Chemical mapping of a 177-nucleotide RNA with DMS and 2A3. The RNA was probed in 150 mM KOAc, 10 mM MgCl2 and 150 mM bicine (pH 8.5) at 24 C. It was measured as part of the RMDB library OK2TST.

[RMDB]
RNA sequence: GGGAACGACUCGAGUAGAGUCGAAAAGACAUGCUCCGUGAGACGGUACGUAUAAUGGCGAAUCGGCAAGCCGUUCUCGUCGGGACGAAGCGCCGUCUGCAAAUUUCCACCGGAGAGUUGCAGCGUCUAAUACGCACGAUUUCGAUCGUGCGUAUUAAAAAGAAACAACAACAACAAC
Reactivity to DMS in 0.01 (KOAc 150mM, MgCl2 10mM, bicine 150mM(pH8.5), 24C), signal-to-noise 5, nucleotides 027 to 126: g020a110c070a100u010g010c010u000c010c040g020u000g000a170g010a030c020g000g020u000a040c160g020u010a090u020a090a100u010g000g000c020g000a110a070u010c060g010g010c090a130a190g010c030c010g010u000u000c040u000c010g010u010c020g010g010g020a040c050g010a090a110g020c040g010c110c030g000u010c010u010g000c010a010a020a070u000u000u000c010c010a130c270c180g010g000a030g010a040g010u000u000g000c010a050g000c080g000u000c060
Reactivity to 2A3 in 0.01 (KOAc 150mM, MgCl2 10mM, bicine 150mM(pH8.5), 24C), signal-to-noise 2, nucleotides 027 to 126: g030a000c030a050u100g020c000u000c020c010g030u050g030a010g000a010c000g060g000u090a030c040g120u090a080u050a260a170u130g100g010c020g040a060a070u080c030g130g000c090a090a070g040c010c000g030u110u050c040u000c020g110u070c000g000g020g020a030c030g030a050a050g040c030g020c050c030g000u060c000u010g000c000a010a070a010u050u080u010c050c130a230c090c090g000g000a010g010a010g060u060u040g000c030a020g000c000g020u030c030